[RMDB]
RNA sequence: GGGAACGACUCGAGUAGAGUCGAAAACGUCAAGGAUUCGUCCUUGACGAAAGUCGCGGCUUGAGGGCGUAUACGGCUGCGCAGACACACGACCCUCAAGCCAAACAGGUGGAUUCGUCCACCUGAACAGUUAAGACACGUUCGCGUGUCUUAACUGAAAAGAAACAACAACAACAAC
Reactivity to DMS in 0.01 (KOAc 150mM, MgCl2 10mM, bicine 150mM(pH8.5), 24C), signal-to-noise 4, nucleotides 027 to 126: c000g010u000c000a020a000g010g000a010u000u020c200g010u000c000c000u000u000g000a010c000g010a030a060a090g010u010c090g010c220g010g020c010u000u000g000a010g000g000g010c010g020u000a100u000a150c130g010g000c050u010g000c100g020c090a050g000a120c090a090c140a040c030g000a120c010c000c010u000c000a010a030g000c010c010a010a060a130c010a010g020g010u000g000g010a030u010u020c180g010u000c000c000a010c040c000u010g000a040a110
Reactivity to 2A3 in 0.01 (KOAc 150mM, MgCl2 10mM, bicine 150mM(pH8.5), 24C), signal-to-noise 5, nucleotides 027 to 126: c010g000u000c000a000a000g010g010a020u040u080c170g050u000c060c000u000u010g000a000c000g010a010a010a000g070u060c030g020c100g150g000c010u000u000g000a010g010g000g010c010g010u030a040u020a070c080g040g020c090u100g060c130g040c120a030g150a040c040a000c000a000c050g300a300c000c000c000u010c010a010a000g000c000c000a010a000a000c010a000g010g000u000g000g000a020u010u060c180g040u000c030c000a000c000c000u000g000a040a020